[RMDB]
RNA sequence: GGGAACGACUCGAGUAGAGUCGAAAAUGGUGUUAAGUGGAAUAAGUGGCCGGAUAUACAUAUAUGUACAGGGGGCUACAUAUAUGUAUAUGCCCCCUCGCGUCAGUAUAAGUAGGUAUAAGGUGGACCGUAGUAUACGUUUCGACGUAUACUACGGAAAAGAAACAACAACAACAAC
Reactivity to DMS in 0.01 (KOAc 150mM, MgCl2 10mM, bicine 150mM(pH8.5), 24C), signal-to-noise 3, nucleotides 027 to 126: u000g000g010u000g000u000u010a060a140g020u020g010g000a090a070u030a040a090g030u010g000g000c050c090g020g000a050u010a030u000a000c010a010u020a020u000a010u000g000u010a040c110a090g000g000g000g010g000c110u010a010c020a000u010a040u020a000u020g020u000a010u000a020u010g010c010c000c030c020c030u000c040g000c050g000u020c030a090g000u030a060u010a050a080g010u010a040g000g000u000a070u010a040a130g000g010u000g030g000a210
Reactivity to 2A3 in 0.01 (KOAc 150mM, MgCl2 10mM, bicine 150mM(pH8.5), 24C), signal-to-noise 5, nucleotides 027 to 126: u070g040g020u050g020u080u110a150a060g050u080g100g100a130a070u130a190a060g050u080g070g030c010c010g030g010a010u000a000u000a030c010a000u010a000u010a000u030g020u020a010c050a070g020g000g000g070g020c010u000a000c010a010u050a000u010a000u020g020u000a020u000a000u020g020c000c000c000c010c000u000c010g020c000g030u050c030a040g050u070a040u020a160a060g070u070a040g000g060u050a100u030a140a030g050g030u030g060g020a020

Conditions: 150 mM KOAc, 10 mM MgCl2 and 150 mM bicine (pH 8.5), 24 C.
Chemical mapping of a 177-nucleotide RNA with DMS and 2A3.
The DMS profile rests on 8,505 reads.
The 2A3 profile rests on 3,440 reads.
Values are in units of 0.01, from 0 to 300, in steps of 10.
DMS adducts were read by reverse transcription with MarathonRT.
Reactivities are given for positions 27 through 126.